[RMDB]
RNA sequence: GGGAACGACUCGAGUAGAGUCGAAAAGAACAUCAUCAAGACCGCGCUUGACGAAUUCGGCGCCGUGCACGGUGUGGUGAGCAACGCCGGGAUCUUGCGCGACGGCACCUUCCACAAGAUGUCGUUCGUCUCGGUUUUCUUUCGAGAAAACCGAGACAAAAGAAACAACAACAACAAC
Reactivity to 2A3 in 0.01 (KOAc 150mM, MgCl2 10mM, bicine 150mM(pH8.5), 24C), signal-to-noise 2, nucleotides 027 to 126: g060a040a000c040a020u180c000a000u050c030a090a070g120a150c020c010g010c000g000c030u060u060g000a070c040g110a080a060u120u150c020g000g000c000g000c030c040g090u180g040c040a030c070g190g000u200g100u150g130g040u010g060a070g030c020a000a040c050g000c000c000g040g000g100a120u010c010u030u040g000c020g000c000g020a000c000g020g050c000a030c000c000u010u040c010c060a100c020a140a060g050a040u050g010u070c020g010u060u090c060

Source: RMDB library OK1LIB, as collected in RNAgym. The record gives the reactivity of an RNA of 177 nucleotides to 2A3.